The data come from the RNA Mapping Database (RMDB), library OK3TST. An RNA of 207 nucleotides, treated with DMS and 2A3 and read out base by base.
RNA sequence: GGGAACGACUCGAGUAGAGUCGAAAAUGAAAAGUGACAAUAGCACUAGUAUGUAUCUCUAAGAACUUCUGUCACUUGCUUAUGGUGGUUGAACCACAGUUUUGUCCUAUAAGCCUUCCUAAUGACUACCACUUCCAGACAGAACUUAGAUCAGAGGCUAAUAAGGAGUCUUCGGACUCCUUAUUAGAAAAGAAACAACAACAACAAC
Reactivity to DMS in 0.01 (KOAc 150mM, MgCl2 10mM, bicine 150mM(pH8.5), 24C), signal-to-noise 3, nucleotides 027 to 156: u020g010a100a060a070a060g000u000g020a050c010a060a100u000a090g060c040a080c050u010a090g020u050a100u010g030u000a090u000c070u010c040u010a050a080g000a170a040c030u000u020c020u000g010u000c000a050c050u000u000g010c070u000u000a070u000g010g050u010g020g030u000u010g010a070a220c020c040a050c060a080g010u010u000u000u000g000u000c000c050u000a090u000a060a090g000c020c040u010u000c030c020u000a080a080u000g010a100c020u020a070c020c010a080c060u000u000c060c060a180g000a080c050a040g010a020a110c020u000u000a070g000a080u000c040a130g010a110g010g010
Reactivity to 2A3 in 0.01 (KOAc 150mM, MgCl2 10mM, bicine 150mM(pH8.5), 24C), signal-to-noise 3, nucleotides 027 to 156: u230g030a020a060a030a000g030u030g020a020c020a060a120u080a130g030c050a030c130u040a040g070u090a070u180g040u030a100u030c040u000c020u060a050a100g030a190a080c010u040u050c040u040g000u010c020a020c060u040u050g020c020u100u050a040u100g040g050u030g010g010u050u110g060a090a050c020c010a030c040a040g030u060u030u080u100g040u000c000c000u040a050u010a160a000g000c000c020u010u050c010c020u050a070a080u080g050a040c000u040a030c010c010a030c040u080u050c030c010a030g020a050c010a040g030a060a050c030u060u050a000g020a070u050c040a020g050a040g130g010
For DMS the reverse transcriptase was MarathonRT. Reactivities are given for positions 27 through 156.